[RMDB]
RNA sequence: GGGAACGACUCGAGUAGAGUCGAAAAGUCUCCUAGAGUGCUUGGCCGUCGGGCCUUACACCCCGACUUGCUGAGUUUCUCUAGGAGAGUCCCUUUCCCAGCCAGAGGUGGCUGGUCAAACAAUACCAAAACUCUUGCUAGUUCGCUAGCAAGAGAACACUUUACAACACUUCGGUGUUGUAAAGUGAAAAGAAACAACAACAACAAC
Reactivity to 2A3 in 0.01 (KOAc 150mM, MgCl2 10mM, bicine 150mM(pH8.5), 24C), signal-to-noise 3, nucleotides 027 to 156: g020u000c000u000c000c010u000a010g000a000g000u000g010c000u000u000g000g000c000c010g010u010c000g000g040g000c030c020u040u080a060c060a050c010c000c010c010g010a010c040u100u250g000c000u000g020a000g000u020u260u040c000u000c000u000a000g000g000a000g000a000g000u010c000c000c000u000u130u040c000c000c020a000g010c010c000a010g000a010g020g020u010g000g000c010u090g020g060u230c050a000a000a030c080a050a050u010a030c000c000a040a010a060a140c000u000c000u000u000g000c000u000a000g020u060u070c200g000c160u010a000g000c000a010a000g000a000g000a030a000
Reactivity to DMS in 0.01 (KOAc 150mM, MgCl2 10mM, bicine 150mM(pH8.5), 24C), signal-to-noise 1, nucleotides 027 to 156: g030u000c010u000c000c020u000a050g010a040g000u000g000c050u000u000g040g020c000c300g000u000c060g000g060g010c050c110u030u010a100c150a140c300c000c030c020g010a040c050u000u000g000c000u000g020a040g030u000u000u000c000u000c000u000a020g000g000a010g020a010g010u000c000c000c000u000u000u000c100c020c000a040g020c010c000a040g010a300g010g010u000g030g000c000u010g000g030u000c070a030a020a110c060a060a060u000a080c020c030a060a120a160a100c030u000c000u000u000g010c000u000a000g000u010u000c300g050c010u000a010g000c010a010a010g000a000g010a020a080

Structure probing data (2A3 and DMS) for a 207-nucleotide construct. The reactions ran in a buffer of 150 mM KOAc, 10 mM MgCl2 and 150 mM bicine (pH 8.5), at 24 C. For DMS the reverse transcriptase was MarathonRT. The 2A3 profile rests on 2,986 reads. The data come from the RNA Mapping Database (RMDB), library M2RFPK.